[RMDB]
RNA sequence: GGGAACGACUCGAGUAGAGUCGAAAAGAGAUCAACCAUGACAGGACAGUUUUAACUUCUUGUAUGCUGCCGAUCGGGAGUGUGGCUAAGCAGCACAACCUGCAACAGAUUGCCCAGGCCUGCUUAGCACAGAGCUCAUAUUCGUAUGAGCUCUGUGAAAAGAAACAACAACAACAAC
Reactivity to 2A3 in 0.01 (KOAc 150mM, MgCl2 10mM, bicine 150mM(pH8.5), 24C), signal-to-noise 3, nucleotides 027 to 126: g110a000g010a020u020c010a010a010c000c020a030u070g110a030c000a010g020g010a020c040a070g020u020u080u080u290a150a070c050u030u040c000u020u030g000u060a020u040g010c020u070g120c060c040g030a040u030c000g020g040g030a100g050u100g000u020g010g050c000u000a010a010g000c000a000g040c020a010c000a080a050c000c000u020g040c000a040a060c020a130g120a240u120u140g030c030c020c010a040g030g070c010c000u000g000c020u010u000a000g020
Reactivity to DMS in 0.01 (KOAc 150mM, MgCl2 10mM, bicine 150mM(pH8.5), 24C), signal-to-noise 5, nucleotides 027 to 126: g000a160g010a040u010c020a060a070c130c010a040u000g000a070c020a020g000g000a030c230a020g010u000u010u010u000a080a080c030u000u000c020u010u000g000u000a030u000g000c080u010g020c080c070g010a030u000c030g000g000g010a160g020u010g020u010g010g010c010u000a010a010g000c010a020g000c120a050c070a070a110c020c010u000g010c100a070a110c150a100g000a090u010u000g010c040c090c020a090g010g010c160c030u000g000c000u000u000a020g010